RNA sequence: GGGAACGACUCGAGUAGAGUCGAAAAAGAUUGCAGGUUCACCCCGUACGGUGCGGAAGUUCGCGCUUCCGUGAAACGCGAAAAUCGGACGGUGGCUGCAAGUCGCAUCGCAAAACCGCGGCAAGUGUUAACCUGGACCUCUUCGGAGGUCCAGGAAGAUGUGAACAUGGUUCGCCAUGUUCACAUCAAAAGAAACAACAACAACAAC
Reactivity to 2A3 in 0.01 (KOAc 150mM, MgCl2 10mM, bicine 150mM(pH8.5), 24C), signal-to-noise 1, nucleotides 027 to 156: a000g120a040u000u040g000c020a000g080g110u120u100c010a030c000c010c010c000g000u010a030c070g000g050u030g010c020g000g010a020a000g020u120u270c100g000c000g010c110u000u000c000c000g000u000g000a060a140a000c090g040c000g110a100a010a000a080u070c000g010g040a070c120g020g020u080g000g010c010u010g060c010a010a010g030u000c010g000c040a080u150c010g000c070a050a070a050a150c010c010g020c020g010g060c070a140a000g040u040g060u260u140a050a110c000c000u000g010g020a020c000c000u070c000u010u050c150g010g000a000g000g000u000c000c000a000g000g000a000a000